[RMDB]
RNA sequence: GGGAACGACUCGAGUAGAGUCGAAAAAAAAACAACAAAUAUGCUCAUGUAAGAUUUGGCACAGUAGCUUCCAGGUACAAGGAUGCCGCAGGACUCAUGGCAUUAGGUCAUGCCUGUGAUGUGACUGCAACCGUAUAGGGUUCGCCCUAUACGGUUGAAAAGAAACAACAACAACAAC
Reactivity to 2A3 in 0.01 (KOAc 150mM, MgCl2 10mM, bicine 150mM(pH8.5), 24C), signal-to-noise 2, nucleotides 027 to 126: a010a020a020a010a000c120a010a020c060a030a060a020u190a060u110g000c020u040c130a060u140g060u180a140a080g040a260u050u110u200g010g020c010a030c010a070g010u080a020g010c020u020u010c010c010a040g050g110u060a080c010a070a090g080g020a010u030g030c020c000g000c010a010g020g050a050c020u010c180a020u020g010g060c040a070u060u260a100g140g000u020c000a010u020g030c000c010u010g000u010g040a070u070g020u040g020a030c020u020g010
Reactivity to DMS in 0.01 (KOAc 150mM, MgCl2 10mM, bicine 150mM(pH8.5), 24C), signal-to-noise 3, nucleotides 027 to 126: a010a010a030a020a020c080a030a010c070a050a030a060u020a080u000g010c030u000c110a060u000g010u000a090a060g010a070u010u000u000g000g010c040a060c030a040g000u000a040g000c030u000u000c010c040a060g010g010u000a060c140a070a060g010g000a050u000g010c040c040g000c050a020g000g010a150c240u000c030a030u010g010g020c000a190u010u000a080g000g020u000c070a050u000g000c000c000u000g000u000g000a060u000g010u010g020a060c060u000g000

An RNA of 177 nucleotides, treated with 2A3 and DMS and read out base by base. The RNA was probed in 150 mM KOAc, 10 mM MgCl2 and 150 mM bicine (pH 8.5) at 24 C. Reactivities are given for positions 27 through 126. Source: RMDB library OK2TRN, as collected in RNAgym. The DMS profile rests on 2,615 reads.